[RMDB]
Notes
An RNA of 177 nucleotides, treated with DMS and 2A3 and read out base by base. The RNA was probed in 150 mM KOAc, 10 mM MgCl2 and 150 mM bicine (pH 8.5) at 24 C. For 2A3 the reverse transcriptase was SuperScript II with manganese. The DMS profile rests on 659 reads.
RNA sequence: GGGAACGACUCGAGUAGAGUCGAAAAGCUGUUCUGUUCGCAGAACAGCAAAGGGAAGCAUCUCAAGCAUUUCAAGGUAGGGAGCACCAAGCAUUUCAAAAUAAACGGAUAAGUUCGCUUAUCCGAACACACAGUGGAUCUUCGGAUCCACUGUGUGAAAAGAAACAACAACAACAAC
Reactivity to DMS in 0.01 (KOAc 150mM, MgCl2 10mM, bicine 150mM(pH8.5), 24C), signal-to-noise 1, nucleotides 027 to 126: g030c000u000g020u000u010c000u000g010u020u020c140g130c030a050g000a000a000c000a000g000c000a000a060a090g010g000g010a090a040g020c050a020u030c060u000c040a090a120g000c080a110u000u040u000c140a100a060g020g000u000a090g000g000g000a010g000c020a030c050c020a010a060g000c070a130u040u000u010c100a050a080a090a080u020a100a120a210c000g000g000a030u000a010a010g000u000u020c290g030c000u000u000a000u000c000c000g010a010a050
Reactivity to 2A3 in 0.01 (KOAc 150mM, MgCl2 10mM, bicine 150mM(pH8.5), 24C), signal-to-noise 1, nucleotides 027 to 126: g040c010u010g050u030u000c000u030g050u030u040c230g050c030a010g000a010a000c000a020g070c030a000a090a000g060g010g040a120a010g020c010a190u050c040u000c090a040a000g000c000a090u060u210u110c060a100a080g050g000u080a030g010g090g020a020g030c000a030c020c000a050a000g090c020a070u110u200u170c160a060a090a030a050u150a150a120a010c000g020g010a010u010a010a000g040u020u080c210g000c110u000u000a010u000c000c010g010a030a010